Structure probing data (2A3 and DMS) for a 177-nucleotide construct. For 2A3 the reverse transcriptase was SuperScript II with manganese. It was measured as part of the RMDB libraries RFM100 and RFMREP.
[RMDB]
RNA sequence: GGGAACGACUCGAGUAGAGUCGAAAAUUUCGUCCUUAAACCAACGAUAACAGCUGUUAGGCCAUGUUUUGUAACGGCUGUUAGGAGCGCUGUUAAGGAGUGUUAACGGUGAGUCGAUUUGGCCGGGACUAGGUACACUUUUCGAAGUGUACCUAGUAAAAGAAACAACAACAACAAC
Reactivity to 2A3 in 0.01 (KOAc 150mM, MgCl2 10mM, bicine 150mM(pH8.5), 24C), signal-to-noise 9, nucleotides 027 to 126: u090u080u060c050g020u040c010c000u040u060a100a040a040c030c010a010a030c030g060a050u010a030a000c000a000g000c000u010g020u040u030a040g100g070c070c060a190u160g180u110u180u130u170g180u050a010a000c000g010g000c000u000g000u000u000a010g000g030a100g050c020g000c020u020g010u030u010a060a030g140g090a100g120u170g050u070u050a040a020c010g000g010u030g020a040g070u060c040g070a140u020u030u070g040g000c020c010g020g010g000
Reactivity to DMS in 0.01 (KOAc 150mM, MgCl2 10mM, bicine 150mM(pH8.5), 24C), signal-to-noise 9, nucleotides 027 to 126: u000u010u010c050g010u000c010c010u000u010a050a100a300c070c040a040a050c110g000a150u010a010a010c000a000g010c000u000g010u000u000a030g010g010c130c130a090u010g010u020u010u010u020g020u010a010a000c000g000g010c000u000g000u000u000a010g000g010a110g010c040g010c030u000g000u000u000a020a040g010g000a110g000u030g010u010u010a030a060c030g000g010u000g010a060g010u000c030g010a180u010u000u000g010g010c090c080g000g000g010